Notes: Structure probing data (2A3) for a 177-nucleotide construct. 2A3 is a SHAPE reagent: it acylates the 2'-hydroxyl of flexible nucleotides of all four kinds. The RNA was probed in 150 mM KOAc, 10 mM MgCl2 and 150 mM bicine (pH 8.5) at 24 C.

RNA sequence: GGGAACGACUCGAGUAGAGUCGAAAACCAGCAUCGUCUGGACAAUCAGCCGGUGGAACGGCGCGAUCACGGCGAGAUAGAUCUUGCCAAGCAGGAUGUUCCGCUUCACCAGCGUCGUCGCAUCGACGACUGCCCAGGCCUUCGGGCCUGGGCAGUCAAAAGAAACAACAACAACAAC
Reactivity to 2A3 in 0.01 (KOAc 150mM, MgCl2 10mM, bicine 150mM(pH8.5), 24C), signal-to-noise 3, nucleotides 027 to 126: c000c000a010g070c060a180u090c020g110u040c010u020g040g100a080c080a040a100u130c070a050g000c030c010g040g000u030g030g060a040a020c000g000g030c030g000c040g120a040u110c070a000c100g030g000c010g020a070g000a060u100a030g180a120u060c000u000u000g000c010c040a080a000g010c030a070g030g120a010u050g100u110u040c000c000g010c040u020u050c040a040c020c010a010g000c000g000u010c010g010u000c000g000c070a110u100c100g020a030c040